[RMDB]
RNA sequence: GGGAACGACUCGAGUAGAGUCGAAAAAAGCAGGCACGCUAGUGUUUGUGGAGUCGCCCUUGAAAUACGACCCUUUGAUUAUCUGGUACCUAACCCUAACGGGAACAUUGCGUGGUGGGUAGUUUGAAUAUUAACUGUAAUUCGUUACAGUUAAUAUAAAAGAAACAACAACAACAAC
Reactivity to DMS in 0.01 (KOAc 150mM, MgCl2 10mM, bicine 150mM(pH8.5), 24C), signal-to-noise 9, nucleotides 027 to 126: a060a070g030c020a030g000g000c010a020c020g020c210u040a100g010u000g010u000u010u000g020u000g010g000a060g010u000c020g010c030c010c010u010u010g010a070a060a070u020a070c100g000a090c030c010c020u000u010u010g010a070u010u010a040u010c030u000g000g000u010a050c020c020u010a080a100c020c010c010u010a090a120c250g000g000g000a080a070c110a080u010u010g010c090g010u000g000g010u010g000g000g010u000a030g010u010u000u010g010a100
Reactivity to 2A3 in 0.01 (KOAc 150mM, MgCl2 10mM, bicine 150mM(pH8.5), 24C), signal-to-noise 9, nucleotides 027 to 126: a000a000g040c010a000g010g000c010a010c040g050c150u170a110g020u000g030u030u020u020g060u050g030g000a020g020u040c020g030c000c000c000u020u080g130a060a040a010u180a040c050g040a060c000c010c000u040u040u080g100a110u030u090a060u090c030u050g060g040u040a030c010c010u030a080a100c010c010c010u040a050a020c040g010g020g020a040a020c050a090u070u170g030c040g030u050g020g080u050g010g040g010u020a050g020u020u050u100g060a030